[RMDB]
RNA sequence: GGGAACGACUCGAGUAGAGUCGAAAAGACGCCUGUGUGGCGAAGCGAGUAUGAGAAAGAGCCGCACAUUAAACAGUCCAUCUAGCGGCAAGAUGGAUUGCUCGCAAAAAGAUCCAUAUCACGGAGAAAUCCACUGAUGCUUCGGCAUCAGUGGAUUAAAAGAAACAACAACAACAAC
Reactivity to DMS in 0.01 (KOAc 150mM, MgCl2 10mM, bicine 150mM(pH8.5), 24C), signal-to-noise 1, nucleotides 027 to 126: g000a130c250g120c000c000u030g000u000g010u000g090g000c030g040a250a030g000c000g000a110g000u000a120u030g070a210g000a190a300a070g010a250g090c030c000g030c080a000c040a030u040u000a070a100a060c040a130g000u000c000c040a000u060c000u000a090g000c000g000g000c010a010a000g000a000u000g000g000a000u000u000g000c000u000c000g000c000a090a000a120a000a080g000a050u000c000c040a240u120a190u000c080a080c240g000g000a040g000a220
Reactivity to 2A3 in 0.01 (KOAc 150mM, MgCl2 10mM, bicine 150mM(pH8.5), 24C), signal-to-noise 2, nucleotides 027 to 126: g070a020c170g110c000c000u000g000u020g020u090g130g000c020g000a140a040g000c000g000a000g000u050a130u280g170a070g090a010a180a000g090a060g000c000c030g050c000a020c000a000u000u080a000a070a040c000a000g040u000c000c000a000u000c000u020a090g080c020g020g030c100a030a000g010a020u000g000g000a000u000u010g000c000u000c010g000c000a020a020a020a020a020g100a030u090c020c000a000u040a050u210c040a040c130g010g000a060g040a030
The record gives the reactivity of an RNA of 177 nucleotides to DMS and 2A3. 2A3 is a SHAPE reagent: it acylates the 2'-hydroxyl of flexible nucleotides of all four kinds. For DMS, 770 sequencing reads were counted.